[RMDB]
Structure probing data (DMS) for a 177-nucleotide construct. The RNA was probed in 150 mM KOAc, 10 mM MgCl2 and 150 mM bicine (pH 8.5) at 24 C. The DMS profile rests on 3,663 reads. DMS adducts were read by reverse transcription with MarathonRT.
RNA sequence: GGGAACGACUCGAGUAGAGUCGAAAAGAUAUGGACGGUCUAGCUAGGGAGGCUUAUCAGCAGACACGUCGGAAACGACGUGAGAACUGCUGUAAGAGCCGAGGAUCUAGCUAGACCGUCCUAAGUCGUAGUAGUAUUCCUUCGGGAAUACUACUACAAAAGAAACAACAACAACAAC
Reactivity to DMS in 0.01 (KOAc 150mM, MgCl2 10mM, bicine 150mM(pH8.5), 24C), signal-to-noise 3, nucleotides 027 to 126: g010a110u010a300u010g020g000a010c020g030g000u000c000u000a000g000c000u000a020g000g000g000a030g020g020c000u000u000a300u000c020a010g020c000a000g010a220c010a000c000g010u000c000g010g000a130a100a280c010g000a030c000g020u000g000a140g010a180a090c010u000g000c000u000g000u010a060a300g010a030g010c000c000g010a090g020g000a030u000c000u000a000g010c000u000a000g000a000c000c000g000u000c000c000u000a000a080g020u010c110